[RMDB]
RNA sequence: GGGAACGACUCGAGUAGAGUCGAAAAGUGUCUUUGGAUUGUCUAGGGCCUAGGUAAUUCUGAGAACUACUGUAAACCAACCACAGGGCACUAAAGCAAUGUACACACCACUCUUUGUGUGUAUGGAAGGGGUUAUAUAAACCUGGGCUAUGCUGGAGCAGUAAUUAUCGUUCGCGAUAAUUACUGCAAAAGAAACAACAACAACAAC
Reactivity to DMS in 0.01 (KOAc 150mM, MgCl2 10mM, bicine 150mM(pH8.5), 24C), signal-to-noise 1, nucleotides 027 to 156: g060u000g010u010c000u000u000u000g000g020a050u000u010g010u010c030u010a060g030g010g080c080c060u000a100g000g020u000a010a030u000u000c020u010g020a180g000a050a070c030u000a080c040u000g000u010a110a150a150c000c030a030a100c050c010a130c050a030g000g000g000c020a090c090u000a040a040a100g030c020a050a100u010g020u000a010c030a020c010a010c010c230a080c140u010c180u000u000u010g020u000g020u010g010u000a030u000g010g010a130a110g000g020g060g010u000u000a120u000a110u000a040a020a040c010c010u000g010g000g040c000u000a040u020g020c000u020g000g020a300
Reactivity to 2A3 in 0.01 (KOAc 150mM, MgCl2 10mM, bicine 150mM(pH8.5), 24C), signal-to-noise 3, nucleotides 027 to 156: g030u030g010u000c010u000u040u050g020g000a020u040u020g020u020c020u060a080g070g130g090c030c050u000a000g020g000u030a010a020u070u050c050u050g040a040g020a080a030c040u160a040c010u090g020u090a030a040a050c020c000a010a020c030c020a060c020a090g050g010g000c050a060c130u140a130a080a000g040c040a060a190u210g020u010a000c010a010c010a000c020c040a160c080u160c130u130u210u090g000u000g000u000g020u010a020u040g010g050a030a100g040g040g000g000u130u060a160u020a050u070a090a110a020c000c020u010g010g040g060c040u040a040u140g020c020u040g000g060a020